[RMDB]
Annotation
Structure probing data (DMS and 2A3) for a 177-nucleotide construct. DMS adducts were read by reverse transcription with MarathonRT. For 2A3, 2,456 sequencing reads were counted. The data come from the RNA Mapping Database (RMDB), library OK2TST. Conditions: 150 mM KOAc, 10 mM MgCl2 and 150 mM bicine (pH 8.5), 24 C.
RNA sequence: GGGAACGACUCGAGUAGAGUCGAAAACAAACCAAAAUUUCCCAUUUAAUGACUGUCACUGUCAAAGCUUAGUGUGGUGGGAAGAAGGCAGAAUGACAGAGAACAUUGUUGAAGUAGCCAAAGCUGACAUGAUUAAUCCUUUCGAGGAUUAAUCAUGAAAAGAAACAACAACAACAAC
Reactivity to DMS in 0.01 (KOAc 150mM, MgCl2 10mM, bicine 150mM(pH8.5), 24C), signal-to-noise 6, nucleotides 027 to 126: c170a090a080a140c130c150a070a050a090a120u000u010u000c000c000c000a190u000u020u010a080a080u010g010a120c030u000g010u000c040a060c020u020g000u000c020a070a130a110g010c040u000u000a050g030u010g030u010g010g020u000g000g010g000a020a050g010a150a130g010g000c000a020g000a120a100u000g000a010c030a010g010a120g020a090a090c080a090u000u000g010u000u000g000a070a170g010u010a030g020c050c070a080a060a090g010c020u010g000a240
Reactivity to 2A3 in 0.01 (KOAc 150mM, MgCl2 10mM, bicine 150mM(pH8.5), 24C), signal-to-noise 3, nucleotides 027 to 126: c020a030a070a050c080c080a070a100a000a130u060u060u000c000c020c010a020u090u180u100a170a090u080g060a050c010u000g030u030c020a010c030u000g020u020c000a160a120a010g020c020u060u110a070g000u120g060u090g230g080u060g050g010g010a030a030g050a050a030g050g000c010a010g020a160a110u030g010a010c020a010g040a010g020a030a040c060a080u020u070g040u090u090g070a070a040g050u070a010g000c030c090a070a050a070g000c030u020g040a040